[RMDB]
The data come from the RNA Mapping Database (RMDB), library OK2TRN.
Chemical mapping of a 177-nucleotide RNA with 2A3 and DMS.
The reactions ran in a buffer of 150 mM KOAc, 10 mM MgCl2 and 150 mM bicine (pH 8.5), at 24 C.
Values cover nucleotides 27 to 126.
Values are in units of 0.01, from 0 to 300, in steps of 10.
The 2A3 profile rests on 3,412 reads.
RNA sequence: GGGAACGACUCGAGUAGAGUCGAAAAUUGCGAACGGGUGAGUAACGCGUAGGUAACCUACCUCAUAGCGGGGGAUAACUAUUGGAAACGAUAGCUAAUACCGCAUAAAAGUGUUUAACCCAUGUUAGAUGUAUUUACCGUUCGCGGUAAAUACAUCAAAAGAAACAACAACAACAAC
Reactivity to 2A3 in 0.01 (KOAc 150mM, MgCl2 10mM, bicine 150mM(pH8.5), 24C), signal-to-noise 3, nucleotides 027 to 126: u130u110g040c060g040a100a000c060g010g030g020u020g030a130g050u090a070a010c010g000c040g060u060a020g000g010u040a080a110c010c060u020a030c010c000u070c030a040u120a040g010c010g010g000g000g010g040a050u030a080a020c000u000a000u010u010g000g010a050a010a020c020g000a010u010a000g000c000u010a000a010u020a090c010c000g000c020a010u160a040a110a000a000g030u040g010u040u030u040a020a030c030c000c000a020u070g070u050u160a060
Reactivity to DMS in 0.01 (KOAc 150mM, MgCl2 10mM, bicine 150mM(pH8.5), 24C), signal-to-noise 4, nucleotides 027 to 126: u010u000g010c060g000a070a040c110g010g000g030u000g010a130g020u000a050a050c040g030c080g020u010a030g020g030u010a070a100c110c090u000a070c020c030u000c100a130u000a150g030c020g000g000g000g000g000a120u000a020a050c000u000a010u000u000g000g010a070a070a160c010g020a010u000a010g000c030u000a070a130u030a070c010c010g000c030a090u010a040a070a100a110g000u000g010u000u000u000a130a130c020c010c010a070u010g000u010u000a150